RNA sequence: GGGAACGACUCGAGUAGAGUCGAAAAUUGUUUCCUCCUCCAGAAACAGAGGUGGAAGCUUGGUCCGGUGUUUCCCAAUGCCUCCCAUUCCUAUUGUUCUUAAGUGCUCCAUCCUUUUCCUUUUGGCGUCUAUACAGAAAUUCGUUUCUGUAUAGACAAAAGAAACAACAACAACAAC
Reactivity to DMS in 0.01 (KOAc 150mM, MgCl2 10mM, bicine 150mM(pH8.5), 24C), signal-to-noise 8, nucleotides 027 to 126: u010u010g010u010u000u000c000c000u000c010c000u000c000c070a190g010a130a120a130c270a110g000a020g000g010u000g000g000a030a040g010c010u000u010g010g010u000c020c030g010g010u010g000u010u000u000c010c010c010a130a110u010g010c030c020u000c020c020c020a130u000u000c020c020u000a080u010u010g000u010u010c050u010u010a070a080g010u010g000c030u000c020c010a050u010c030c010u000u010u000u000c020c020u000u000u010u000g010g020c270
Reactivity to 2A3 in 0.01 (KOAc 150mM, MgCl2 10mM, bicine 150mM(pH8.5), 24C), signal-to-noise 9, nucleotides 027 to 126: u060u040g010u010u010u000c000c000u000c000c000u000c010c030a090g170a180a200a070c040a030g010a010g020g000u010g010g010a020a000g010c020u040u080g050g010u040c030c020g010g030u060g030u010u040u020c010c000c000a020a040u090g020c000c010u020c010c010c010a040u050u060c010c010u080a100u100u150g050u070u060c020u060u100a120a060g030u030g070c010u000c010c010a060u050c010c000u030u040u030u070c010c000u060u090u040u090g090g020c050
Chemical mapping of a 177-nucleotide RNA with DMS and 2A3. Values cover nucleotides 27 to 126.